Structure probing data (2A3 and DMS) for a 177-nucleotide construct. For 2A3, 3,954 sequencing reads were counted. The DMS profile rests on 1,576 reads. For DMS the reverse transcriptase was MarathonRT.
RNA sequence: GGGAACGACUCGAGUAGAGUCGAAAAGAUAUGGACAAGGUGGAGUGCUUGGAUUUAUCGGAAACGAUUGUCAGCACCCACUUGUCCUAAGUCAAAACCAUUUUCAUUGUUCGCAAUGAAAAUGGAAGUUACAUCUUCCCUUCGGGGAAGAUGUAACAAAAGAAACAACAACAACAAC
Reactivity to 2A3 in 0.01 (KOAc 150mM, MgCl2 10mM, bicine 150mM(pH8.5), 24C), signal-to-noise 3, nucleotides 027 to 126: g010a010u050a030u100g000g000a010c010a010a040g300g130u100g060g120a300g050u000g030c040u130u170g100g040a050u300u300u150a040u030c000g010g000a040a070a040c000g000a010u010u010g030u040c010a010g000c000a000c000c000c000a010c000u020u000g010u000c000c000u010a040a020g010u010c030a000a020a050a160c000c000a000u000u000u000u010c000a000u010u010g030u060u070c300g030c130a000a020u010g000a000a010a000a000u010g000g000a030a000
Reactivity to DMS in 0.01 (KOAc 150mM, MgCl2 10mM, bicine 150mM(pH8.5), 24C), signal-to-noise 1, nucleotides 027 to 126: g010a010u000a300u010g000g000a010c000a000a000g000g000u000g010g010a120g030u000g030c000u000u000g010g000a010u000u000u000a000u020c000g020g010a140a110a130c000g000a010u000u000g000u000c000a050g000c000a000c030c000c000a010c010u000u000g000u000c000c010u000a000a090g000u000c030a080a080a140a190c000c000a000u000u000u010u000c000a020u000u000g000u000u010c210g000c000a030a000u020g020a010a000a000a000u010g010g000a020a030